[RMDB]
RNA sequence: GGGAACGACUCGAGUAGAGUCGAAAAGAGUUGUUUGGGAAUGCAGCUCUAAGUGGGUGGUAAAUUUCAUCUAAAGCUAAAUAUUGGCCGGAGACCGAUAGCGCACAAGUAGAGUGAUCGAAAGGUUAAUACGGGUAGAAUUCGUUCUACCCGUAUUAAAAGAAACAACAACAACAAC
Reactivity to 2A3 in 0.01 (KOAc 150mM, MgCl2 10mM, bicine 150mM(pH8.5), 24C), signal-to-noise 7, nucleotides 027 to 126: g030a000g000u010u010g020u030u040u100g090g020g030a090a040u060g010c000a010g000c000u010c000u000a090a000g050u090g030g030g010u050g020g010u060a090a140a150u130u120u050c040a060u010c040u140a120a040a040g000c010u060a080a070a060u230a170u100u080g030g000c010c010g050g010a060g020a030c020c010g060a040u080a030g030c050g000c010a020c010a100a010g000u040a010g030a020g030u050g020a030u050c020g030a070a030a010g030g000u010u020
Reactivity to DMS in 0.01 (KOAc 150mM, MgCl2 10mM, bicine 150mM(pH8.5), 24C), signal-to-noise 4, nucleotides 027 to 126: g010a100g010u000u000g010u000u000u000g020g030g020a100a100u020g020c030a060g010c030u000c020u010a040a070g020u030g000g020g010u000g000g000u010a050a080a110u030u010u000c040a080u010c050u020a110a120a100g000c050u000a040a070a090u040a080u030u000g000g010c020c000g000g020a110g010a070c080c040g000a080u010a070g000c050g040c040a050c060a030a070g020u000a060g000a050g010u020g020a080u010c040g010a060a070a110g000g000u010u000
Notes
Structure probing data (2A3 and DMS) for a 177-nucleotide construct. The RNA was probed in 150 mM KOAc, 10 mM MgCl2 and 150 mM bicine (pH 8.5) at 24 C. It was measured as part of the RMDB libraries RFM100 and RFMREP. DMS adducts were read by reverse transcription with MarathonRT.